[RMDB]
RNA sequence: GGGAACGACUCGAGUAGAGUCGAAAAGGGCCGCCGUAAUUAGCUAUGUGCACUUCAGGUUGCUGGCAUUCUAAUUCGAGGGCAGUGAAGGGCGCGGGGUUCGUCGCAUGGCAAACUGACGAUCAGCAUCCUCGAGAGGGUUCGCCCUCUCGAGGAUAAAAGAAACAACAACAACAAC
Reactivity to DMS in 0.01 (KOAc 150mM, MgCl2 10mM, bicine 150mM(pH8.5), 24C), signal-to-noise 1, nucleotides 027 to 126: g010g000g000c000c000g000c040c000g000u030a010a020u060u000a040g010c080u020a070u010g010u040g000c030a160c060u020u040c070a110g000g030u060u000g010c040u000g000g000c080a080u080u220c150u000a050a060u000u040c030g000a200g000g000g000c010a090g010u030g000a090a210g000g010g040c110g010c000g000g000g030g000u000u040c010g000u000c010g000c090a010u110g000g020c060a100a090a100c100u030g000a000c060g030a120u000c080a160g000c150
Reactivity to 2A3 in 0.01 (KOAc 150mM, MgCl2 10mM, bicine 150mM(pH8.5), 24C), signal-to-noise 1, nucleotides 027 to 126: g030g000g000c000c000g160c020c000g030u020a040a040u020u020a050g000c090u130a170u170g080u100g000c020a000c050u180u230c060a050g110g010u110u050g020c010u010g070g030c000a020u050u000c000u050a040a140u040u020c000g010a000g000g000g120c020a030g010u000g090a000a050g010g000g020c010g000c010g000g080g000g000u000u020c020g000u020c020g050c030a010u080g020g200c150a200a210a000c020u030g050a020c040g000a060u070c000a000g110c000

An RNA of 177 nucleotides, treated with DMS and 2A3 and read out base by base.
Conditions: 150 mM KOAc, 10 mM MgCl2 and 150 mM bicine (pH 8.5), 24 C.
Source: RMDB library OK1LIB, as collected in RNAgym.
Values are in units of 0.01, from 0 to 300, in steps of 10.